[RMDB]
RNA sequence: GGGAACGACUCGAGUAGAGUCGAAAAAGCAGACGCUGCUAACAGUGAGUAUCUCUAGUGAAGCGGACUCGAGCUCAUAAUCAAGUCAUUGUUUAAAGGCCCAGAUAAAUUACAUCUGGUGACUCUUCGCGGACCUUCAAGCCAGGAGAUUCGCCGAGCAUGAUUAACGAUUCGUCGUUAAUCAUGCAAAAGAAACAACAACAACAAC
Reactivity to DMS in 0.01 (KOAc 150mM, MgCl2 10mM, bicine 150mM(pH8.5), 24C), signal-to-noise 1, nucleotides 027 to 156: a080g000c060a050g010a160c060g030c050u000g000c050u020a070a130c070a160g050u030g030a140g030u010a040u000c030u010c010u010a160g000u000g000a120a120g000c070g040g030a080c010u000c020g010a170g020c010u030c060a090u000a050a150u020c060a030a190g020u000c070a080u010u010g000u000u000u000a070a040a120g000g000c030c000c000a030g000a070u000a030a060a170u010u000a080c080a090u000c010u000g000g040u000g020a030c050u000c040u000u010c000g020c050g070g000a050c010c010u000u000c050a100a210g020c030c100a200g000g010a060g010a070u010u010c020g020c010c060g010a150
Reactivity to 2A3 in 0.01 (KOAc 150mM, MgCl2 10mM, bicine 150mM(pH8.5), 24C), signal-to-noise 4, nucleotides 027 to 156: a000g050c030a030g050a120c080g040c110u050g010c040u070a130a040c010a050g060u030g070a040g070u130a120u080c040u020c050u090a060g000u020g120a140a020g040c060g060g050a040c020u030c050g040a010g010c030u010c070a110u140a230a090u130c050a050a050g090u050c030a080u030u100g030u050u110u090a090a130a000g020g000c010c010c030a010g020a020u100a020a190a080u190u180a050c030a070u000c010u040g000g030u030g030a100c020u020c010u160u020c040g020c080g040g020a080c000c000u090u060c120a080a060g040c030c030a010g030g000a010g030a020u040u030c010g000c040c020g020a000
This 207-nucleotide RNA was probed chemically with DMS and 2A3. High DMS reactivity at an A or C suggests that its Watson-Crick edge is free. Conditions: 150 mM KOAc, 10 mM MgCl2 and 150 mM bicine (pH 8.5), 24 C. The 2A3 profile rests on 2,088 reads. Source: RMDB library OK3TST, as collected in RNAgym.